Record summary
Structure probing data (2A3 and DMS) for a 177-nucleotide construct. 2A3 adducts were read by reverse transcription with SuperScript II with manganese.

[RMDB]
RNA sequence: GGGAACGACUCGAGUAGAGUCGAAAAACCUCGCCGCGCGGCAGCAAGAUCCUGCUGAAGCGCAUGUCACGCGUUCGAUCGGACGAAAAGGAUGCGGAUAGCGCCGAGGCCAAGGACGAGUUGCACGUGGACACAGAUAUUUCGAUAUCUGUGUCCAAAAAGAAACAACAACAACAAC
Reactivity to 2A3 in 0.01 (KOAc 150mM, MgCl2 10mM, bicine 150mM(pH8.5), 24C), signal-to-noise 2, nucleotides 027 to 126: a000c010c000u020c060g110c040c000g030c020g000c090g050g000c000a010g010c000a010a060g040a260u000c000c000u020g000c010u010g020a010a000g000c010g000c020a030u100g000u000c030a040c290g000c000g010u000u000c010g020a080u060c050g060g300a120c140g040a120a000a000a090g010g000a000u010g000c010g010g000a000u010a020g000c000g010c000c000g020a010g010g000c030c050a070a030g000g000a000c010g010a010g030u010u010g010c040a060c110g030
Reactivity to DMS in 0.01 (KOAc 150mM, MgCl2 10mM, bicine 150mM(pH8.5), 24C), signal-to-noise 4, nucleotides 027 to 126: a100c050c010u000c130g030c110c050g010c050g020c030g000g010c010a030g000c030a060a260g000a140u000c030c010u010g010c010u000g010a260a140g000c010g050c010a050u010g010u000c010a100c030g010c000g020u010u020c000g000a300u000c020g020g020a090c200g000a020a030a130a180g000g010a010u000g040c000g000g000a040u000a050g000c010g000c000c000g000a300g020g000c060c250a070a040g000g040a050c040g030a300g000u000u000g010c050a040c070g030

Source: RMDB library OK2TST, as collected in RNAgym. As a SHAPE reagent, 2A3 marks flexible, mostly unpaired nucleotides at the ribose 2'-OH. For DMS, 2,772 sequencing reads were counted. The 2A3 profile rests on 5,109 reads.